[RMDB]
RNA sequence: GGGAACGACUCGAGUAGAGUCGAAAAACGUUGAUAUGGAUUUACUCCGAGGAGACGAACUACCACGAACAGGGGAAACUCUACCAGUGGCGUCUCCGUUUGACGAGUAAGUCCUAAGUCAACAUGCGACGAAGCUCGUUCGCGAGCUUCAAAAGAAACAACAACAACAAC
Reactivity to 2A3 in 0.01 (KOAc 150mM, MgCl2 10mM, bicine 150mM(pH8.5), 24C), signal-to-noise 3, nucleotides 027 to 129: a010c100g000u000u000g000a000u000a000u020g000g000a000u010u000u010a010c010u020c000c000g010a030g010g000a010g030a000c000g000a010a020c110u290a100c110c000a000c000g020a030a000c010a010g000g010g000g000a000a000a000c000u000c000u000a030c020c040a000g000u000g000g010c000g000u000c000u000c010c000g000u040u030u040g000a000c000g000a000g000u010a010a000g000u000c000c010u000a000a000g000u000c000a000a000c000a010u110g060c030g030a070c010
Reactivity to DMS in 0.01 (KOAc 150mM, MgCl2 10mM, bicine 150mM(pH8.5), 24C), signal-to-noise 3, nucleotides 027 to 129: a050c170g050u000u000g000a030u000a080u000g000g010a000u000u000u000a030c000u040c010c030g000a060g000g020a040g030a020c000g010a040a040c070u120a290c100c000a040c000g060a200a300c250a060g000g000g000g000a030a000a080c010u040c010u030a060c070c100a060g010u010g000g020c060g010u040c010u040c020c000g000u030u030u090g000a100c300g000a050g010u020a010a030g020u010c020c020u000a000a000g000u030c020a080a000c000a050u030g020c140g050a060c090